[RMDB]
RNA sequence: GGGAACGACUCGAGUAGAGUCGAAAAAAAGAUAUGGACCUUAGGGAGUCUACCACUACCUAUGAAGCUCGUCGGAAACGACGAGUGGAGGUAGGAGUAGACGAAGAACUAAGGUCCUAAGUCAAAACGAAUAUGAACUCUUCGGAGUUCAUAUUCGAAAAGAAACAACAACAACAAC
Reactivity to DMS in 0.01 (KOAc 150mM, MgCl2 10mM, bicine 150mM(pH8.5), 24C), signal-to-noise 2, nucleotides 027 to 126: a040a060a060g010a020u000a300u000g000g000a030c000c000u000u000a000g000g000g000a110g020u000c000u000a010c010c300a270c040u000a000c000c000u000a290u000g010a070a240g010c010u000c010g040u000c000g000g000a160a060a160c000g010a020c000g030a040g040u000g030g020a030g030g030u000a000g010g000a200g000u010a010g000a000c000g000a090a110g000a110a110c000u010a000a010g000g020u010c000c000u000a010a070g000u000c070a120a050a060a290
Reactivity to 2A3 in 0.01 (KOAc 150mM, MgCl2 10mM, bicine 150mM(pH8.5), 24C), signal-to-noise 1, nucleotides 027 to 126: a030a000a000g060a040u080a080u080g000g020a000c010c000u000u000a000g000g020g000a060g010u000c000u020a010c000c050a060c050u000a000c010c010u300a300u300g000a040a000g010c010u000c010g000u000c000g040g000a050a070a060c020g010a000c000g000a000g010u010g030g000a000g000g000u010a020g040g010a010g010u000a000g000a000c000g100a060a020g010a010a020c000u010a000a000g020g010u000c000c010u020a050a000g000u020c000a000a000a000a200
This 177-nucleotide RNA was probed chemically with DMS and 2A3. The 2A3 profile rests on 2,385 reads. Reactivities are rounded to 0.1 and cut off at 0 and 3. 2A3 adducts were read by reverse transcription with SuperScript II with manganese. The DMS profile rests on 1,269 reads.